[RMDB]
RNA sequence: GGGAACGACUCGAGUAGAGUCGAAAAGAUAUGGACCUAGGACCGUGGAGUACGAUAAGUACCGGUCGGAAACGACCGUGUACUUUUGACGUACGCCGGUGAAAUACACGGUCCUAGGUCCUAAGUCCCUACACGUAUGCUUCGGCAUACGUGUAGGAAAAGAAACAACAACAACAAC
Reactivity to DMS in 0.01 (KOAc 150mM, MgCl2 10mM, bicine 150mM(pH8.5), 24C), signal-to-noise 1, nucleotides 027 to 126: g020a020u000a030u020g010g040a000c000c020u010a000g000g020a020c010c000g010u000g000g010a130g000u000a010c000g040a180u010a010a050g010u000a000c000c010g000g010u000c000g010g010a000a020a080c000g020a010c020c020g050u030g010u000a000c000u000u000u010u000g030a160c030g000u010a000c000g040c060c040g000g000u000g000a110a110a140u040a300c190a020c040g030g000u000c000c030u020a000g000g000u000c000c000u000a000a060g040u000c000
Chemical mapping of a 177-nucleotide RNA with DMS. Reactivities are rounded to 0.1 and cut off at 0 and 3.